[RMDB]
RNA sequence: GGGAACGACUCGAGUAGAGUCGAAAAUUGUUUGCGUAUGCAGUAGCCAACUUAGACUGUGUCUAUGUUUGUACGUAUUUAUACAUAAAGGGCUGUAGAAGUUACUUAUGUUUUUCUUUUAAUGGCUACGAGUCCACAUAUUUAAUCAAAUGAUGAAAUUUUAGGCAGCAUUCGUGCUGCCUAAAAUAAAAGAAACAACAACAACAAC
Reactivity to DMS in 0.01 (KOAc 150mM, MgCl2 10mM, bicine 150mM(pH8.5), 24C), signal-to-noise 1, nucleotides 027 to 156: u020u000g000u000u000u000g010c030g000u010a050u000g070c010a210g020u000a040g060c010c020a070a130c020u000u000a020g020a030c040u000g030u000g000u000c010u010a010u000g020u010u000u020g030u000a080c040g000u020a080u020u010u000a140u000a050c000a040u020a110a040a170g020g020g000c030u000g000u040a090g010a110a070g010u010u000a020c000u000u010a030u000g030u000u000u000u010u020c080u020u000u030u000a030a110u000g020g010c030u000a030c000g010a260g020u010c040c070a040c010a070u000a080u000u010u010a070a190u010c040a030a060a090u000g000a110u020g010a100a040
Reactivity to 2A3 in 0.01 (KOAc 150mM, MgCl2 10mM, bicine 150mM(pH8.5), 24C), signal-to-noise 1, nucleotides 027 to 156: u200u120g040u120u000u000g010c020g000u050a010u060g000c020a050g030u020a020g000c000c000a020a000c000u000u000a000g010a010c080u150g130u120g000u300c010u010a040u040g030u040u120u050g000u000a010c000g020u000a030u010u080u100a120u040a000c000a010u030a020a040a000g030g000g000c020u030g010u100a040g110a300a000g000u030u050a070c010u000u000a030u000g010u010u070u110u000u070c100u030u240u030u150a120a050u030g010g010c000u010a020c040g030a020g030u000c050c000a000c030a110u210a220u090u260u250a060a070u100c060a100a120a060u050g080a030u080g050a100a200